[RMDB]
RNA sequence: GGGAACGACUCGAGUAGAGUCGAAAAGCGGCCUGCCCAGAGUGCCUUCUAGAUCCUGGGUCAGGCGCCAAGCUCCCCAGCAUCAUGCAGGAAGCUGCAGCCCCGCAGAGUUAGGACAGCUCAUUUGCAUAAGAUAGCGGUUCGCCGCUAUCUUAUGAAAAGAAACAACAACAACAAC
Reactivity to 2A3 in 0.01 (KOAc 150mM, MgCl2 10mM, bicine 150mM(pH8.5), 24C), signal-to-noise 2, nucleotides 027 to 126: g000c010g070g050c000c000u000g000c000c020c000a010g080a060g060u130g090c020c040u160u210c080u090a070g010a140u050c010c010u000g020g020g000u070c020a010g000g010c030g000c010c000a080a000g030c020u030c000c010c010c000a000g020c010a030u190c000a010u050g010c000a000g050g050a100a020g060c050u030g000c030a030g030c030c000c020c030g030c090a060g010a010g060u020u110a070g040g080a020c020a030g000c050u030c020a080u090u100u210g000
Reactivity to DMS in 0.01 (KOAc 150mM, MgCl2 10mM, bicine 150mM(pH8.5), 24C), signal-to-noise 3, nucleotides 027 to 126: g010c040g020g000c000c000u000g010c010c000c010a020g000a140g020u010g010c110c090u010u020c170u000a130g000a080u000c030c000u000g010g010g000u020c040a000g010g010c010g030c110c050a110a080g010c040u000c040c010c010c070a100g000c110a100u000c070a100u000g020c030a070g020g020a130a100g010c030u000g010c050a090g010c050c010c030c060g010c100a110g000a070g010u000u000a060g010g010a110c090a070g000c020u000c020a140u010u000u000g000
The data come from the RNA Mapping Database (RMDB), library RFMREP. Structure probing data (2A3 and DMS) for a 177-nucleotide construct. DMS adducts were read by reverse transcription with MarathonRT. For DMS, 2,209 sequencing reads were counted. Values are in units of 0.01, from 0 to 300, in steps of 10. The reactions ran in a buffer of 150 mM KOAc, 10 mM MgCl2 and 150 mM bicine (pH 8.5), at 24 C.